Chemical mapping of a 177-nucleotide RNA with 2A3 and DMS. For DMS, 11,016 sequencing reads were counted. The RNA was probed in 150 mM KOAc, 10 mM MgCl2 and 150 mM bicine (pH 8.5) at 24 C. It was measured as part of the RMDB library OK2TST.
[RMDB]
RNA sequence: GGGAACGACUCGAGUAGAGUCGAAAAUUUGAGGUUUAUGAGAAAUUGUAAUCUUCAAUUUCUAGUUAGUGGAGGUGGGCGUGGAGGAGAAAAUGUUUGCAUUUAUUACAUGUGUAGAAAUGUACUGUCAUUGUAGUAUCUUCGGAUACUACAAUGAAAAAGAAACAACAACAACAAC
Reactivity to 2A3 in 0.01 (KOAc 150mM, MgCl2 10mM, bicine 150mM(pH8.5), 24C), signal-to-noise 4, nucleotides 027 to 126: u050u050u090g040a050g010g010u020u090u100a050u040g010a010g020a040a050a060u010u010g000u050a040a090u040c090u080u030c010a010a020u030u010u000c010u020a070g040u190u050a030g000u070g090g050a170g040g050u150g010g030g060c130g080u260g000g050a150g030g020a060g040a030a100a020a030u110g070u090u070u060g010c010a000u000u010u050a120u030u080a050c040a110u230g080u080g000u200a010g040a030a030a000u000g030u040a080c040u070g030
Reactivity to DMS in 0.01 (KOAc 150mM, MgCl2 10mM, bicine 150mM(pH8.5), 24C), signal-to-noise 6, nucleotides 027 to 126: u000u010u010g010a060g000g010u010u000u000a040u000g010a010g010a070a060a080u000u000g000u000a050a080u010c130u010u000c000a010a010u000u000u000c030u000a060g000u000u010a080g000u010g000g000a160g000g000u010g000g010g000c170g010u020g000g000a110g000g010a100g000a050a040a060a070u010g010u010u010u000g010c010a010u000u000u000a060u020u000a010c030a150u010g010u010g010u000a030g000a020a020a020u000g010u000a040c290u010g010